Description:
An RNA of 177 nucleotides, treated with 2A3 and DMS and read out base by base. Values cover nucleotides 27 to 126. For 2A3 the reverse transcriptase was SuperScript II with manganese. The 2A3 profile rests on 39,483 reads.
RNA sequence: GGGAACGACUCGAGUAGAGUCGAAAAGCGUAGUCGUGCGUGCCCUUCGGCAGCAUUUGCGCGAUGUAUUCGGCGCCGAUCACGGCGAGCAGGUACGACUUCAGGUUGCGGUUCAGCGUCGAGAAGAACUAAAAUUAUGAUUCGUCAUAAUUUUAGUAAAAGAAACAACAACAACAAC
Reactivity to 2A3 in 0.01 (KOAc 150mM, MgCl2 10mM, bicine 150mM(pH8.5), 24C), signal-to-noise 9, nucleotides 027 to 126: g030c030g020u040a010g040u080c050g000u010g030c120g110u050g010c020c010c000u070u080c100g040g020c050a060g000c020a040u050u050u080g010c030g000c010g010a020u090g110u160a230u040u110c030g080g020c020g000c010c010g010a020u040c030a020c120g040g000c010g020a030g010c030a020g040g070u070a060c060g020a070c060u050u040c050a040g120g070u070u090g050c040g020g020u030u040c020a010g020c010g050u030c020g010a020g010a110a020g030a030
Reactivity to DMS in 0.01 (KOAc 150mM, MgCl2 10mM, bicine 150mM(pH8.5), 24C), signal-to-noise 9, nucleotides 027 to 126: g010c070g020u000a040g010u010c100g020u000g010c010g010u000g010c010c020c110u010u010c080g010g020c090a150g020c090a030u000u010u000g010c020g020c010g010a060u010g010u010a120u000u000c030g020g010c010g010c010c030g010a040u010c070a080c040g010g010c050g000a070g000c060a040g010g020u000a060c090g010a060c030u000u000c070a110g010g010u000u000g010c100g000g000u000u000c040a110g010c060g010u000c020g000a070g010a120a120g000a110